[RMDB]
RNA sequence: GGGAACGACUCGAGUAGAGUCGAAAACGUAACACGGGCCGAGAGCUGUUCUGCGAGAGAUAAUCCCUGAGCUAUGCCUUUAUCGGCCAGGGCGGAACCAUCGGUGGCAAUCAGGAUGUGCUUGUAACGUACGUAUACUAUUCGUAGUAUACGUACGAAAAGAAACAACAACAACAAC
Reactivity to 2A3 in 0.01 (KOAc 150mM, MgCl2 10mM, bicine 150mM(pH8.5), 24C), signal-to-noise 9, nucleotides 027 to 126: c020g040u060a080a010c050a030c130g040g040g000c010c010g040a040g000a010g060c080u050g020u070u020c020u040g040c060g040a120g000a000g010a120u140a160a090u100c010c000c000u010g020a030g030c030u090a070u240g020c010c030u120u150u090a160u120c030g000g010c020c000a010g000g010g000c030g010g020a010a020c020c000a040u040c030g050g020u040g060g000c020a020a060u060c020a050g060g020a070u090g040u050g060c040u070u070g080u100a080a020
Reactivity to DMS in 0.01 (KOAc 150mM, MgCl2 10mM, bicine 150mM(pH8.5), 24C), signal-to-noise 9, nucleotides 027 to 126: c080g010u010a080a100c100a120c080g020g010g010c020c010g020a080g000a090g020c070u000g010u000u000c030u000g010c090g010a130g010a070g000a110u010a120a130u000c010c000c000u000g000a100g020c070u010a090u010g010c070c060u000u000u010a110u010c110g010g000c010c020a060g000g000g000c060g010g010a070a090c080c040a060u000c060g010g020u000g000g010c060a060a080u000c080a070g000g000a090u000g010u000g000c040u000u000g010u010a070a150
The record gives the reactivity of an RNA of 177 nucleotides to 2A3 and DMS.
The data come from the RNA Mapping Database (RMDB), library OK2TST.
In probing experiments dimethyl sulfate is read out at A N1 and C N3, which are open when not base-paired.
2A3 adducts were read by reverse transcription with SuperScript II with manganese.